[RMDB]
RNA sequence: GGGAACGACUCGAGUAGAGUCGAAAAAGCUGCUUGAACGAUAUGAACAGCAAGAAGGAAUUGUGUGAGUGACACGGACAACCGCCCCGCAAUUCCACACUAUGCUCAUAUCCCUUGCAAAGGCUCUGCACUCAUAGUAACUGUGUUACCGCUGCAAUGAAGGUAAAAACUUCGGUUUUUACCUUCAAAAAGAAACAACAACAACAAC
Reactivity to 2A3 in 0.01 (KOAc 150mM, MgCl2 10mM, bicine 150mM(pH8.5), 24C), signal-to-noise 4, nucleotides 027 to 156: a000g080c050u030g000c000u060u050g030a180a080c060g020a020u000a020u050g040a090a060c050a050g020c020a010a020g030a050a030g010g000a010a010u000u020g000u020g060u100g060a130g050u070g020a060c090a040c170g070g030a020c060a190a180c020c010g060c050c010c000c000g000c010a000a000u010u000c000c000a000c000a000c000u150a190u100g000c000u000c020a000u010a010u010c000c000c010u020u020g020c020a060a050a010g030g000c020u000c000u070g030c050a030c020u050c030a040u070a090g040u080a120a100c100u110g010u010g030u140u070a050c000c040g070c070u120g000c110a030a090
Reactivity to DMS in 0.01 (KOAc 150mM, MgCl2 10mM, bicine 150mM(pH8.5), 24C), signal-to-noise 2, nucleotides 027 to 156: a090g040c030u010g010c000u000u010g000a080a110c030g000a030u000a060u000g000a030a010c000a030g010c080a100a110g000a240a240g030g000a040a000u000u000g000u000g000u010g010a020g040u010g020a170c060a240c090g050g010a170c100a090a070c050c030g010c000c030c010c020g010c000a020a060u000u010c010c030a130c080a270c030u000a080u010g000c010u000c000a050u010a020u000c010c030c020u010u000g010c020a050a100a120g000g000c000u000c040u000g010c030a080c040u000c050a100u000a130g030u000a040a100c030u000g010u000g010u010u000a050c030c020g020c020u000g000c000a080a140